[RMDB]
RNA sequence: GGGAACGACUCGAGUAGAGUCGAAAACCAGAUGACGGUCCUGCCAUGAGACCGCAACGAGAGCAUGUCGCAUCGAAUGGACUCGGGGAGACGGCAGCUUGCCCCACGGAUGAGCGCCUAAUGCCGGAAGAGACGUGCAACUUCGGUUGCACGUCAACCAACUGAGAAUGUUCGCAUUCUCAGUUGGAAAAGAAACAACAACAACAAC
Reactivity to DMS in 0.01 (KOAc 150mM, MgCl2 10mM, bicine 150mM(pH8.5), 24C), signal-to-noise 1, nucleotides 027 to 156: c010c010a160g030a160u010g050a080c050g020g040u000c090c040u040g000c050c240a140u020g020a120g000a080c020c030g010c010a030a170c030g000a060g000a100g010c050a100u000g020u000c010g000c070a030u000c000g000a130a300u030g010g000a080c130u000c020g000g020g000g010a130g070a050c090g000g000c020a100g000c030u000u000g000c030c030c060c040a230c190g000g000a140u020g020a050g030c020g010c010c040u050a060a150u000g000c030c030g000g000a060a130g000a170g020a040c010g110u000g040c000a020a010c020u020u000c270g050g030u000u010g010c000a010c000g000u000c000a010a050
Reactivity to 2A3 in 0.01 (KOAc 150mM, MgCl2 10mM, bicine 150mM(pH8.5), 24C), signal-to-noise 3, nucleotides 027 to 156: c000c000a030g080a140u180g040a080c020g000g010u030c010c020u070g160c080c020a100u100g030a050g010a170c010c030g000c030a040a030c070g110a020g010a040g150c060a080u130g030u090c050g010c020a040u040c050g040a080a060u070g010g030a020c010u000c090g010g010g000g020a050g000a020c040g020g000c020a020g040c040u070u080g040c010c040c010c000a030c060g030g010a120u070g020a050g030c020g070c000c020u100a080a040u100g030c020c010g060g030a060a010g100a020g000a030c010g000u000g010c000a000a000c010u000u040c180g070g000u010u000g000c000a010c020g000u000c000a000a000